[RMDB]
RNA sequence: GGGAACGACUCGAGUAGAGUCGAAAAGUUUUCUUCGGAAAACGGCACAGCGUACUACCAUAACUAUGAAGUACUGAAGUCAACAGCGAUCCCAAAUAGGAUCGACAUGACUACAGUAUGGAGUUAUGGUAUCGCACACAUCGAUGUUCGCAUCGAACAUUACUCCCCCUUUCGAGGGGGAGUAAUGAAAAGAAACAACAACAACAAC
Reactivity to 2A3 in 0.01 (KOAc 150mM, MgCl2 10mM, bicine 150mM(pH8.5), 24C), signal-to-noise 5, nucleotides 027 to 156: g000u000u010u000u000c010u030u040c110g090g010a000a020a020a020c020g090g020c110a060c050a200g010c020g050u170a110c060u010a000c010c010a000u000a000a000c000u030a090u300g070a050a010g000u010a000c010u020g040a090a000g000u000c010a040a080c060a170g060c000g010a010u030c000c040c030a140a260a090u300a080g000g000a000u000c000g110a140c020a040u060g000a000c000u050a020c000a000g000u000a000u050g010g010a010g000u000u000a000u010g000g000u000a000u010c020g010c010a020c010a010c000a110u060c030g020a020u020g020u110u160c200g030c080a000u000c000g040a050a020
Reactivity to DMS in 0.01 (KOAc 150mM, MgCl2 10mM, bicine 150mM(pH8.5), 24C), signal-to-noise 2, nucleotides 027 to 156: g020u020u000u010u000c000u010u000c190g090g000a030a030a020a010c010g000g050c050a040c050a240g050c020g040u010a080c100u000a000c000c010a000u000a000a010c000u000a220u010g010a260a300g020u020a020c020u000g010a110a030g010u000c020a000a070c100a170g020c010g010a010u000c010c000c020a040a100a290u010a080g010g000a010u000c020g000a060c070a300u000g010a000c010u000a120c000a020g000u000a020u000g000g020a020g010u010u000a020u000g000g010u000a000u010c010g010c040a060c030a040c040a140u010c070g010a110u000g010u000u000c190g000c070a060u010c000g000a070a240